RNA sequence: GGGAACGACUCGAGUAGAGUCGAAAAGAUAUGGAUUACUGUGCCAAGAUGAGGCCGAGGAUCUUACGUAACAUCGCUCGGAAACGAGCGUGGUAAGGGAGGCUUGAGGCACAGUAAUCCUAAGUCAGUAAAUAACUAAGUUCGCUUAGUUAUUUACAAAAGAAACAACAACAACAAC
Reactivity to 2A3 in 0.01 (KOAc 150mM, MgCl2 10mM, bicine 150mM(pH8.5), 24C), signal-to-noise 5, nucleotides 027 to 126: g030a020u070a030u130g000g000a000u010u010a010c010u000g010u010g020c000c020a120a060g300a300u300g300a170g220g030c020c020g080a300g010g020a010u020c010u000u010a000c010g080u050a070a030c040a300u300c040g000c020u000c000g010g000a020a030a030c000g000a000g000c000g000u010g000g000u010a010a000g000g020g000a030g000g010c020u080u120g130a220g030g000c000a000c000a000g000u000a000a000u000c000c000u000a000a000g000u000c010a000
Reactivity to DMS in 0.01 (KOAc 150mM, MgCl2 10mM, bicine 150mM(pH8.5), 24C), signal-to-noise 6, nucleotides 027 to 126: g010a030u000a300u010g000g010a020u000u000a000c000u000g020u000g000c000c000a190a250g030a270u010g010a160g010g020c010c010g000a090g010g010a030u010c000u000u000a010c000g010u000a040a070c210a030u020c000g000c000u010c000g010g000a060a060a150c000g010a020g010c000g040u000g020g000u000a000a010g000g010g000a030g020g020c010u000u010g010a140g000g000c000a000c000a000g010u010a000a000u000c000c000u000a010a050g000u000c030a190